[RMDB]
RNA sequence: GGGAACGACUCGAGUAGAGUCGAAAAGCGCUGGCUAUCUAUGGCCCGACUCUGUGUCAAAAGUAAAGUAGCUGCCUUUGUGAUGGUCAGCUUAUAAAUAACAACUUUUUCCAUGUUAUAAAGGCAGGGAUAAUAUUAAAUUCGUUUAAUAUUAUCCAAAAGAAACAACAACAACAAC
Reactivity to DMS in 0.01 (KOAc 150mM, MgCl2 10mM, bicine 150mM(pH8.5), 24C), signal-to-noise 4, nucleotides 027 to 126: g020c150g010c000u010g000g000c000u000a000u000c010u000a170u000g010g000c040c040c020g000a080c070u040c140u040g020u030g000u010c060a040a100a080a090g000u000a090a110a090g000u010a100g050c010u000g000c000c000u000u000u020g020u020g000a030u010g010g020u000c010a010g000c010u010u030a080u040a070a070a070u040a050a040c090a080a140c140u000u000u010u000u010c020c000a090u010g000u000u000a030u010a030a030a020g010g000c050a020g010
Reactivity to 2A3 in 0.01 (KOAc 150mM, MgCl2 10mM, bicine 150mM(pH8.5), 24C), signal-to-noise 6, nucleotides 027 to 126: g070c030g010c020u000g020g010c000u010a010u020c020u040a080u110g040g010c000c020c000g080a090c040u070c070u100g080u020g040u070c010a090a020a010a040g070u120a090a080a020g030u040a100g020c010u020g000c010c000u030u080u050g080u050g020a010u010g000g010u010c010a000g000c000u010u030a040u010a010a120a020u170a050a010c030a010a070c040u100u070u010u040u010c020c010a040u030g010u070u060a090u070a050a040a010g020g000c000a000g010